[RMDB]
RNA sequence: GGGAACGACUCGAGUAGAGUCGAAAACGCUGGGUCGAAGAGGGCACACUACCCACCACCUCUGAAGCGCGCACGGAGGUGAGGUAGCCCUCAUGCGACCUGUGCUGAAGCGCGCACGGCAACCGAAAGGUGCGAUAGGUCAGCUUCGGCUGACCAAUAGCCAUAACUAAUUCGUUAGUUAUGGCUAAAAAGAAACAACAACAACAAC
Reactivity to DMS in 0.01 (KOAc 150mM, MgCl2 10mM, bicine 150mM(pH8.5), 24C), signal-to-noise 2, nucleotides 027 to 156: c040g030c050u010g040g050g050u030c010g020a140a180g000a040g010g010g040c040a140c120a190c130u010a090c080c040c060a120c030c010a070c000c000u000c020u000g010a070a080g050c050g060c040g000c000a300c020g020g010a070g030g020u000g030a060g000g030u000a050g000c000c000c030u000c020a020u000g000c030g030a030c030c010u000g050u000g000c000u000g010a080a090g010c000g040c030g000c010a300c000g000g020c050a110a070c010c020g010a140a100a150g000g000u000g030c030g010a160u000a070g000g040u020c000a070g030c010u010u000c300g020g000c000u020g000a000c020c000a060a140
Reactivity to 2A3 in 0.01 (KOAc 150mM, MgCl2 10mM, bicine 150mM(pH8.5), 24C), signal-to-noise 4, nucleotides 027 to 156: c030g000c010u040g000g010g000u000c000g000a040a020g000a030g000g000g050c000a000c010a010c050u280a130c000c010c000a010c010c000a000c000c000u030c000u020g040a200a050g010c000g000c000g000c000a020c010g000g000a010g000g000u020g010a080g110g040u070a060g000c010c050c020u000c000a000u140g040c000g010a000c000c000u010g020u010g000c000u030g030a110a040g000c000g000c000g000c000a010c000g030g000c000a010a030c000c000g060a110a050a000g000g000u020g020c000g040a100u130a130g000g000u000c000a000g000c010u030u150c240g140g000c000u000g000a000c000c000a000a010
The record gives the reactivity of an RNA of 207 nucleotides to DMS and 2A3. DMS adducts were read by reverse transcription with MarathonRT. Reactivities are rounded to 0.1 and cut off at 0 and 3. For 2A3 the reverse transcriptase was SuperScript II with manganese. Conditions: 150 mM KOAc, 10 mM MgCl2 and 150 mM bicine (pH 8.5), 24 C.